[RMDB]
RNA sequence: GGGAACGACUCGAGUAGAGUCGAAAACAAACUAACUUCGGUUAGUUUGAAAGAACGCUGCAACGCGCUGAGCUCUCGCGAGAGCGCGAAUGCACAAAGAAAAAAGAUAAUCGUUCGCGAUUAUCAACCUUCUCUAGUACUUCGGUACUAGAGAAGGAAAAGAAACAACAACAACAAC
Reactivity to 2A3 in 0.01 (KOAc 150mM, MgCl2 10mM, bicine 150mM(pH8.5), 24C), signal-to-noise 2, nucleotides 027 to 126: c010a000a000a000c000u000a000a000c010u020u060c090g040g000u000u000a000g000u010u020u000g000a020a020a000g080a100a020c120g020c190u000g000c000a030a060c020g000c000g000c040u020g010a020g010c010u070c080u140c260g000c060g020a080g030a010g100c000g000c010g020a050a060u050g000c010a000c030a010a100a040g150a040a110a020a000a000a010g010a000u010a010a010u010c000g000u020u050c290g040c020g070a000u000u010a000u020c000a010a060
Reactivity to DMS in 0.01 (KOAc 150mM, MgCl2 10mM, bicine 150mM(pH8.5), 24C), signal-to-noise 2, nucleotides 027 to 126: c010a010a000a020c010u000a000a000c000u010u020c190g010g000u000u000a000g000u000u000u000g000a030a070a110g020a120a110c160g000c110u000g060c040a030a300c020g000c020g000c020u010g000a260g000c010u010c140u040c300g000c070g010a070g040a080g060c010g020c000g000a050a100u000g010c000a000c060a060a090a160g020a010a070a020a060a090a060g010a010u000a000a010u000c000g010u010u000c230g030c000g000a020u000u000a010u000c010a090a100

An RNA of 177 nucleotides, treated with 2A3 and DMS and read out base by base. The 2A3 profile rests on 2,548 reads. The reactions ran in a buffer of 150 mM KOAc, 10 mM MgCl2 and 150 mM bicine (pH 8.5), at 24 C. It was measured as part of the RMDB library M2PK50.